RNA sequence: GGGAACGACUCGAGUAGAGUCGAAAAUCACAGCAUACGCUUUAUAUUAAGGAUGGCGACGAUGGUUACUUCCUUCCUUAUCCAGACCCUUCAAGAAUUUUGUCUGCCGGUUGCUUUGUAGAUGAUAUGAGAAGGGCCUUCGGGCCCUUCAAAAGAAACAACAACAACAAC
Reactivity to DMS in 0.01 (KOAc 150mM, MgCl2 10mM, bicine 150mM(pH8.5), 24C), signal-to-noise 1, nucleotides 027 to 129: u030c030a120c060a100g000c110a030u000a140c120g040c000u010u070u050a100u080a130u140u000a060a080g000g000a020u080g030g030c240g030a040c090g000a060u000g000g010u000u000a050c160u090u040c120c000u000u000c020c020u000u000a100u010c010c080a050g050a140c020c000c000u010u080c140a070a060g000a100a060u030u020u060u080g000u000c030u000g020c120c050g000g030u000u000g110c080u000u000u000g000u000a090g000a090u010g080a080u020a040u000g020a000
Reactivity to 2A3 in 0.01 (KOAc 150mM, MgCl2 10mM, bicine 150mM(pH8.5), 24C), signal-to-noise 1, nucleotides 027 to 129: u040c000a020c020a120g070c010a050u010a240c160g000c000u040u010u000a170u000a080u060u000a030a030g010g000a160u050g000g000c000g000a000c000g000a000u020g150g000u100u120a000c030u000u010c020c000u050u070c000c000u080u070a040u090c000c090a000g090a190c000c000c000u000u020c000a280a070g000a150a150u000u000u070u000g000u000c000u030g000c000c000g000g000u000u040g040c050u080u000u180g020u000a000g000a040u090g010a000u000a000u140g130a120
This 170-nucleotide RNA was probed chemically with DMS and 2A3.
The RNA was probed in 150 mM KOAc, 10 mM MgCl2 and 150 mM bicine (pH 8.5) at 24 C.
Values are in units of 0.01, from 0 to 300, in steps of 10.
Source: RMDB library 15KLIB, as collected in RNAgym.
2A3 adducts were read by reverse transcription with SuperScript II with manganese.